[RMDB]
RNA sequence: GGGAACGACUCGAGUAGAGUCGAAAACGGCGGCGCGUGGAGGCUGCCAAACUUAGGGGAGCACCGGGACAGCACUGUGGCCGGGCGAGAGGUUCACUGCCGGUCCCUGGGACGCCGGGACGCUGCAGACGGUUAGCAAAUUCGUUUGCUAACCGUCAAAAGAAACAACAACAACAAC
Reactivity to DMS in 0.01 (KOAc 150mM, MgCl2 10mM, bicine 150mM(pH8.5), 24C), signal-to-noise 1, nucleotides 027 to 126: c120g000g010c030g040g000c030g000c120g020u000g000g010a110g010g000c010u000g030c020c080a000a070a080c160u000u000a100g000g000g010g010a090g010c040a130c010c010g010g010g040a080c070a080g010c040a280c090u030g000u000g010g010c030c030g000g010g010c020g040a080g020a080g020g000u010u010c050a050c020u000g000c010c030g010g000u000c000c010c020u030g040g000g000a300c120g000c030c040g000g010g000a080c030g000c020u000g020c070a110